[RMDB]
RNA sequence: GGGAACGACUCGAGUAGAGUCGAAAACUGUUACUCGUGAGAGUAACAGAGGUGGCGUUCGCGCCACCAAGGAAUGCUACGGCAUUCCAGUUACGCGUUCGCGCGUAACAGUAUGACUACGGUCAUACACAAUGACUUCGGUCAUUGAGACUAAGCUACGGCUUAGUCAAGGUAGCGUUCGCGCUACCAAGGAAGUUACUACGGUAACUUCCAAGACUGGAUCGUGAGAUCCAGUCAAUCCGGUCGACUCCGGAGAAACAAAGUCUAGAUCUACAUUCGUGUAGAUCAAAAGAAACAACAACAACAAC
Reactivity to DMS in 0.01 (KOAc 150mM, MgCl2 10mM, bicine 150mM(pH8.5), 24C), signal-to-noise 3, nucleotides 027 to 266: c000u010g000u000u000a000c010u000c020g000u030g000a250g000a020g000u000a000a010c000a010g000a120g010g000u000g010g010c000g030u000u020c190g030c000g040c010c000a000c010c000a080a080g000g000a020a000u010g010c000u010a110c230g030g010c010a010u000u000c000c010a110g020u000u000a010c000g010c010g010u000u020c220g020c010g010c010g010u000a010a020c020a150g010u000a000u000g000a010c010u010a130c240g020g000u000c000a000u000a000c020a300c030a010a000u000g010a010c000u000u020c150g020g010u010c000a010u000u000g000a160g000a010c000u000a000a010g000c000u000a130c170g020g010c000u010u000a010g000u000c020a070a060g010g000u000a000g000c000g010u010u010c300g020c000g000c000u000a000c000c010a090a090g000g000a010a010g000u010u000a000c000u000a090c150g000g000u000a000a000c000u000u000c000c000a050a050g010a020c000u000g000g000a010u000c000g010u010g000a160g000a000u000c000c000a000g000u000c010a060a160u000c000c000g000g000u000c010g010a020c010u010c000c010g000g000a010g000a120a020a240c120a010a020a000g000u000c000u010a060
Reactivity to 2A3 in 0.01 (KOAc 150mM, MgCl2 10mM, bicine 150mM(pH8.5), 24C), signal-to-noise 9, nucleotides 027 to 266: c000u000g000u000u000a000c000u000c000g040u090g130a160g000a000g030u000a000a000c000a000g010a030g000g000u000g000g010c030g020u070u080c250g020c010g000c100c000a000c000c000a000a000g000g000a000a000u010g000c010u040a020c270g140g000c010a000u000u000c000c000a000g000u000u000a000c000g020c010g020u030u080c220g030c000g000c000g130u000a000a000c000a010g000u000a000u000g000a000c000u020a020c280g100g000u010c000a000u010a010c080a000c010a070a010u000g000a000c010u040u060c240g090g000u000c000a000u010u110g130a140g000a040c000u000a000a000g000c000u020a030c300g110g000c000u000u000a000g000u000c020a000a050g000g000u000a000g000c010g020u040u050c200g020c010g000c120u000a000c000c000a000a020g000g000a000a000g000u010u000a000c010u010a020c190g110g000u010a000a000c000u000u000c000c000a010a020g000a000c000u000g000g000a000u000c000g020u030g110a090g000a010u000c000c000a000g000u000c000a000a000u000c000c000g010g010u000c010g010a010c120u160c300c090g000g010a020g100a010a010a000c000a000a010a000g010u010c010u070a050